[RMDB]
RNA sequence: GGGAACGACUCGAGUAGAGUCGAAAAAACCCAAGAAUCACUGUUUCUUAUAGCGGUGGUUUAAACAGAGGUGCAAACAGCAAGUGAAUCUCGUCGCCUUUGCGGGGCUGUGGCCAUGCCCCUCAAAUCAGUGUUAGAUCUUCGGAUCUAACACUGAAAAAGAAACAACAACAACAAC
Reactivity to DMS in 0.01 (KOAc 150mM, MgCl2 10mM, bicine 150mM(pH8.5), 24C), signal-to-noise 3, nucleotides 027 to 126: a090a070c000c000c000a130a140g010a040a000u000c060a010c020u000g010u000u000u010c160u050u020a080u020a030g010c000g000g000u010g000g020u030u000u010a040a130a080c160a100g010a070g010g010u020g000c060a080a040a100c120a070g000c070a020a050g000u010g010a080a070u020c030u010c020g020u000c040g000c040c080u010u010u000g010c100g000g030g000g020c020u000g010u010g010g030c130c070a060u010g030c010c000c000c010u000c030a060a040a080
Reactivity to 2A3 in 0.01 (KOAc 150mM, MgCl2 10mM, bicine 150mM(pH8.5), 24C), signal-to-noise 5, nucleotides 027 to 126: a000a000c010c000c000a000a030g070a000a000u020c010a000c010u010g050u040u050u020c150u130u240a140u240a120g000c000g000g010u010g010g030u000u020u050a050a040a010c030a020g030a030g000g030u040g020c030a010a090a120c010a090g050c020a040a140g080u090g150a100a090u040c030u010c060g090u060c020g050c020c030u060u050u090g030c050g010g000g010g000c020u010g020u090g100g020c050c010a010u030g000c000c010c000c000u010c010a020a060a010
Annotation
Chemical mapping of a 177-nucleotide RNA with DMS and 2A3. DMS adducts were read by reverse transcription with MarathonRT. For 2A3 the reverse transcriptase was SuperScript II with manganese. Conditions: 150 mM KOAc, 10 mM MgCl2 and 150 mM bicine (pH 8.5), 24 C. The data come from the RNA Mapping Database (RMDB), libraries RFM100 and RFMREP.